[RMDB]
RNA sequence: GGGAACGACUCGAGUAGAGUCGAAAAUAAAGAAGAUACAGCAGCAGCUAGCAAAUUUACUUUGAGUUAUGAAUAUCACAGAUUCAGGCUAAUCAAUAUGGCAGACAAUUUAAUUGCUAGACUAAUGGUGAAACCAAAAUCAGAUUGGCUAAUAUCAAACGUAUGAUAUGUUCGCAUAUCAUACGUUAAAAGAAACAACAACAACAAC
Reactivity to DMS in 0.01 (KOAc 150mM, MgCl2 10mM, bicine 150mM(pH8.5), 24C), signal-to-noise 4, nucleotides 027 to 156: u000a070a090a100g000a130a070g020a170u000a090c040a120g000c050a080g030c070a070g020c000u000a080g000c040a040a030a110u000u000u000a040c050u000u000u010g010a150g030u000u010a070u000g010a120a100u010a060u010c060a110c090a140g010a090u000u010c050a110g030g020c060u000a070a080u010c030a100a090u000a090u000g010g010c010a100g020a060c050a020a060u000u000u000a080a090u000u000g010c030u000a040g010a090c060u000a050a060u000g010g040u010g010a080a030a070c020c030a040a030a040a130u000c120a070g010a090u000u000g020g010c030u000a090a050u000a120u000c060a080
Reactivity to 2A3 in 0.01 (KOAc 150mM, MgCl2 10mM, bicine 150mM(pH8.5), 24C), signal-to-noise 4, nucleotides 027 to 156: u160a020a060a030g070a040a020g030a040u090a070c030a020g030c010a000g010c020a000g000c040u060a000g000c010a020a070a120u090u140u090a090c080u110u090u110g060a060g030u110u100a140u150g040a040a020u080a030u170c080a050c020a110g070a070u030u040c010a000g010g010c020u060a050a030u050c030a040a050u060a050u150g050g000c010a020g020a080c010a030a010u040u070u110a120a060u070u050g010c010u020a010g040a120c040u070a070a040u080g030g000u030g010a070a030a010c010c000a010a030a010a040u050c010a020g030a080u020u060g010g000c010u020a060a020u100a050u180c100a100
The record gives the reactivity of an RNA of 207 nucleotides to DMS and 2A3. For 2A3 the reverse transcriptase was SuperScript II with manganese. The DMS profile rests on 8,955 reads. The RNA was probed in 150 mM KOAc, 10 mM MgCl2 and 150 mM bicine (pH 8.5) at 24 C. It was measured as part of the RMDB library OK3TST.